[RMDB]
RNA sequence: GGGAACGACUCGAGUAGAGUCGAAAAUCCCCUGGCUCAAGGCAGAUCCAGCUGUGGCACUUUAUCCUGGAGCUGCUGCGGAAGGAGGAGUACCAGGGCGUCAUUGCCUGGCAGGGGGACUACGGGGAAUUCGUCAUCAAAGACCCUGAUGAGGUGAACGGCGAUAAUGAUUCGUCAUUAUCGCCGUAAAAGAAACAACAACAACAAC
Reactivity to 2A3 in 0.01 (KOAc 150mM, MgCl2 10mM, bicine 150mM(pH8.5), 24C), signal-to-noise 2, nucleotides 027 to 156: u040c000c000c000c010u030g120g110c030u080c180a100a080g000g020c000a030g000a060u030c030c020a050g000c090u100g060u060g180g030c000a030c090u020u090u040a250u200c060c020u080g080g070a060g010c050u110g080c100u170g010c090g080g110a020a010g010g040a040g010g020a010g010u010a070c000c000a000g010g050g000c020g000u090c040a110u030u200g000c020c010u020g010g000c010a040g000g020g000g000g000a000c000u050a020c060g050g000g000g060a030a120u150u120c080g060u090c040a030u020c040a040a110a100g060a090c030c000c000u000g000a050u030g020a000g010g080u060g010a030
Reactivity to DMS in 0.01 (KOAc 150mM, MgCl2 10mM, bicine 150mM(pH8.5), 24C), signal-to-noise 1, nucleotides 027 to 156: u000c000c000c010c030u000g040g010c020u000c010a130a190g000g100c060a300g010a070u000c040c060a180g050c000u000g030u000g000g030c030a030c070u000u010u000a100u010c050c070u000g020g000a300g020c010u010g010c080u050g020c080g030g040a230a130g040g040a170g000g000a070g010u010a040c030c010a090g030g020g080c000g020u000c120a060u000u000g010c000c040u000g000g050c020a080g000g000g000g040g000a000c030u000a110c000g000g000g000g040a060a170u000u000c040g010u000c050a170u000c040a110a030a120g000a190c060c020c000u000g010a070u010g000a090g050g000u000g010a100
An RNA of 207 nucleotides, treated with 2A3 and DMS and read out base by base. The 2A3 profile rests on 893 reads. For DMS the reverse transcriptase was MarathonRT.